Conditions: 150 mM KOAc, 10 mM MgCl2 and 150 mM bicine (pH 8.5), 24 C.
Structure probing data (DMS and 2A3) for a 177-nucleotide construct.
The DMS profile rests on 1,387 reads.
DMS adducts were read by reverse transcription with MarathonRT.
RNA sequence: GGGAACGACUCGAGUAGAGUCGAAAAGAUAUGGAACCUUUUUGGGUGGGAGAGCCUUCGGAAACGAAGCUCGAGGAUCACCAGGUUCCUAAGUCAAAAGUUUCCAAGCGUUCGCGCUUGGAAACAAUCAUCCACUUAUCUUCGGAUAAGUGGAUGAAAAAGAAACAACAACAACAAC
Reactivity to DMS in 0.01 (KOAc 150mM, MgCl2 10mM, bicine 150mM(pH8.5), 24C), signal-to-noise 2, nucleotides 027 to 126: g010a030u000a300u010g010g000a000a010c000c010u000u000u000u040u020g060g000g000u000g000g020g000a070g000a020g000c190c090u000u000c000g000g010a130a120a160c000g010a010a000g020c000u000c000g030a060g030g000a020u000c010a020c000c000a060g010g000u000u000c000c000u020a040a060g010u000c030a140a040a130a170g010u000u000u000c000c000a020a000g010c000g020u000u020c300g020c030g010c000u010u000g000g000a000a010a000c000a050a070
Reactivity to 2A3 in 0.01 (KOAc 150mM, MgCl2 10mM, bicine 150mM(pH8.5), 24C), signal-to-noise 1, nucleotides 027 to 126: g040a020u050a050u120g010g000a030a020c010c000u150u150u150u300u300g290g000g000u010g000g020g000a020g000a000g030c020c000u000u000c000g020g050a070a040a050c000g000a010a000g010c000u010c010g020a160g000g010a030u020c000a020c000c020a000g010g000u000u000c000c010u010a080a030g010u030c000a000a070a080a200g010u030u010u000c000c030a000a040g000c000g050u090u280c300g000c000g000c080u030u040g000g120a000a000a000c000a000a010